[RMDB]
RNA sequence: GGGAACGACUCGAGUAGAGUCGAAAAAUGAAGAGCUUAAAGAGCUAGUGGAUGAAUUCACAAAUGUAUAUGGUUGGGUACCAAUAGAGGAAAAGAGUAAUUACUUUACAAUCAAUCAUAAGGAUAGCAUAGUGUUAGCGUUCGCGCUAACACUAUGAAAAGAAACAACAACAACAAC
Reactivity to 2A3 in 0.01 (KOAc 150mM, MgCl2 10mM, bicine 150mM(pH8.5), 24C), signal-to-noise 7, nucleotides 027 to 126: a000u200g060a050a090g040a000g050c010u050u080a130a050a040g120a020g000c030u060a040g070u030g070g010a070u090g110a110a210u160u100c040a010c030a070a120a030u190g090u140a080u040a020u120g050g010u040u010g030g020g020u060a060c010c040a120a060u120a110g080a080g060g100a020a090a070a040g070a000g040u070a030a070u090u060a060c050u090u040u020a050c080a040a070u060c000a000a030u030c020a020u070a130a060g150g030a100u090a080g050
Reactivity to DMS in 0.01 (KOAc 150mM, MgCl2 10mM, bicine 150mM(pH8.5), 24C), signal-to-noise 5, nucleotides 027 to 126: a050u050g010a090a090g010a040g010c030u020u040a080a090a120g000a080g010c010u010a050g010u010g020g020a070u010g000a060a090u040u030c030a030c050a060a040a070u000g020u030a060u000a020u010g010g020u010u000g010g000g000u030a080c080c080a060a060u030a070g000a100g030g000a060a040a030a080g000a090g030u010a070a060u040u030a100c040u010u010u000a050c150a110a090u010c030a040a030u000c050a040u010a040a110g030g020a100u010a080g000